[RMDB]
RNA sequence: GGGAACGACUCGAGUAGAGUCGAAAAGUACUUUUCGCCACGGGCACGCAGUUCAGCCAGAACUGUAUCGAUGCCUUUUUUAUCGAUUACACGCAUACCUUUAGCAGAUACGCGCAGGGUGACAAAACAGUGCCCUAUUAUUCGUAAUAGGGCACUGAAAAGAAACAACAACAACAAC
Reactivity to DMS in 0.01 (KOAc 150mM, MgCl2 10mM, bicine 150mM(pH8.5), 24C), signal-to-noise 3, nucleotides 027 to 126: g030u000a060c060u010u000u020u000c010g010c000c000a100c190g000g020g000c000a050c060g010c040a000g020u000u000c030a110g000c230c200a180g020a030a040c040u000g040u010a090u030c020g000a090u000g010c020c040u000u000u040u020u020u010a050u030c030g010a060u010u010a040c180a180c100g000c060a050u010a050c060c020u000u010u010a190g000c120a030g000a060u000a060c120g000c040g000c120a090g020g000g000u000g020a070c180a020a030a030a070
Reactivity to 2A3 in 0.01 (KOAc 150mM, MgCl2 10mM, bicine 150mM(pH8.5), 24C), signal-to-noise 4, nucleotides 027 to 126: g090u100a120c020u070u040u010u090c140g080c010c020a070c070g010g010g000c000a000c050g000c000a020g010u010u000c020a090g060c130c040a040g010a040a010c000u010g010u030a080u060c090g080a100u070g000c030c000u060u020u000u000u040u090a160u020c010g000a020u020u160a110c050a020c080g070c040a020u150a300c000c030u100u170u090a060g000c020a060g030a250u120a150c050g000c000g010c060a010g000g090g000u040g060a050c090a050a060a030a020